Background:
Chemical mapping of a 207-nucleotide RNA with 2A3. Source: RMDB library OK3TST, as collected in RNAgym.
RNA sequence: GGGAACGACUCGAGUAGAGUCGAAAAAGUAAAUUGCUAGAGUAGGUAUCUUUGAUAUGUAGAGAAAAGACAAAUUAAAUUUUAAACGAUGUUUAGGUUUUACCACAUCAGUACUGGGGAGAGGUAGCAAAGAUUUGAAUGUGUAUGCCUGGGAGUACGAAAGUGACACUUUCGAGUGUCACUUUCGAAAAGAAACAACAACAACAAC
Reactivity to 2A3 in 0.01 (KOAc 150mM, MgCl2 10mM, bicine 150mM(pH8.5), 24C), signal-to-noise 1, nucleotides 027 to 156: a000g020u020a030a070a080u170u120g010c040u070a040g010a020g070u090a000g000g070u060a010u110c040u060u110u120g060a060u100a030u120g060u150a070g010a000g000a170a060a080a040g010a010c030a000a070a020u120u070a010a160a080u160u170u070u130a070a120a000c010g000a000u030g090u010u090u120a090g000g040u120u250u050u030a020c030c000a070c000a060u010c000a000g020u000a000c030u000g000g000g000g000a020g000a010g020g000u010a020g000c030a030a030a030g040a000u000u020u090g080a100a080u100g060u010g020u020a020u060g050c000c020u000g000g090g060a040g140u160a020
The RNA was probed in 150 mM KOAc, 10 mM MgCl2 and 150 mM bicine (pH 8.5) at 24 C. 2A3 adducts were read by reverse transcription with SuperScript II with manganese.